Overview:
The data come from the RNA Mapping Database (RMDB), library OK3TST. This 207-nucleotide RNA was probed chemically with 2A3 and DMS. The RNA was probed in 150 mM KOAc, 10 mM MgCl2 and 150 mM bicine (pH 8.5) at 24 C.
RNA sequence: GGGAACGACUCGAGUAGAGUCGAAAAACUCUGGAAUGCUUAUUUUAAAAUUAACUAAUGUGUUAACCUACAUACAAAUUUGUAUUUUUACUUGAAGGAAAAGCAGCAUUGCUGGUAGUGCACAUGUGCUUCUGUACAUACAGAUUGUACACAUUGAUAGCUGCUAUAGUUUCGACUAUAGCAGCUAAAAAGAAACAACAACAACAAC
Reactivity to 2A3 in 0.01 (KOAc 150mM, MgCl2 10mM, bicine 150mM(pH8.5), 24C), signal-to-noise 1, nucleotides 027 to 156: a000c030u050c030u020g000g070a100a030u060g040c010u050u060a130u160u260u150u130a010a060a100a120u170u030a070a030c000u040a030a060u090g160u000g000u120u000a060a050c000c030u060a020c020a050u130a020c020a030a110a200u080u050u110g000u020a030u000u080u020u030u000a070c030u090u170g060a010a020g020g000a060a140a000a000g010c040a010g000c000a050u020u120g020c010u000g080g060u110a050g030u050g020c030a010c000a070u050g030u020g000c010u000u000c010u010g030u020a030c040a190u120a040c020a010g050a100u000u080g030u050a000c010a000c000a040u010u040g090a070
Reactivity to DMS in 0.01 (KOAc 150mM, MgCl2 10mM, bicine 150mM(pH8.5), 24C), signal-to-noise 1, nucleotides 027 to 156: a100c010u000c020u000g010g000a080a070u000g010c010u010u000a070u030u000u000u030a040a130a120a160u010u000a040a030c000u010a120a060u010g010u030g040u000u000a010a030c030c060u000a110c070a100u000a140c110a020a060a130u000u000u010g030u000a040u010u000u000u000u000a040c050u010u000g010a110a060g040g000a110a050a060a020g000c070a060g040c100a100u000u000g020c040u000g000g020u000a060g010u000g050c040a130c060a070u000g030u000g000c020u000u000c030u000g040u000a070c200a070u000a300c030a030g000a070u000u000g010u010a030c000a020c020a050u000u000g000a230